[RMDB]
This 177-nucleotide RNA was probed chemically with DMS and 2A3. Values cover nucleotides 27 to 126.

RNA sequence: GGGAACGACUCGAGUAGAGUCGAAAAAUAGUGUUAUUCGUAACACUAUAUAUCCCAACUCAAGGAUUCGUUCCAGAGACAUGCAUGCUAGCAUGAAAGCAACUGAACAAGCGUUCGCGCUUGUUAAAUCUGUCAGAUUAUUCGUAAUCUGACAGAUAAAAGAAACAACAACAACAAC
Reactivity to DMS in 0.01 (KOAc 150mM, MgCl2 10mM, bicine 150mM(pH8.5), 24C), signal-to-noise 6, nucleotides 027 to 126: a020u000a010g010u000g000u000u000a010u000u010c160g020u000a000a020c000a000c000u000a010u000a040u000a110u000c000c010c010a140a150c120u000c080a090a100g000g000a030u000u000c070g010u000u010c000c000a110g010a140g010a240c050a010u010g010c010a120u010g030c200u000a110g000c000a020u000g000a120a110a090g010c140a070a080c140u000g000a020a020c000a010a010g000c000g020u000u000c190g020c020g010c000u010u000g010u000u000a020a100
Reactivity to 2A3 in 0.01 (KOAc 150mM, MgCl2 10mM, bicine 150mM(pH8.5), 24C), signal-to-noise 6, nucleotides 027 to 126: a000u010a000g010u000g010u010u000a030u050u060c200g040u030a010a000c000a000c000u000a000u000a000u010a010u020c000c000c000a030a060c030u050c060a120a140g070g000a050u040u060c100g050u080u000c010c010a020g020a010g010a140c010a010u020g040c000a010u150g170c040u120a060g010c010a020u030g050a070a010a000g070c030a050a110c070u150g050a020a000c040a000a000g010c000g020u050u090c220g000c000g000c070u000u000g000u010u020a020a020
Description
For DMS, 6,389 sequencing reads were counted. DMS adducts were read by reverse transcription with MarathonRT.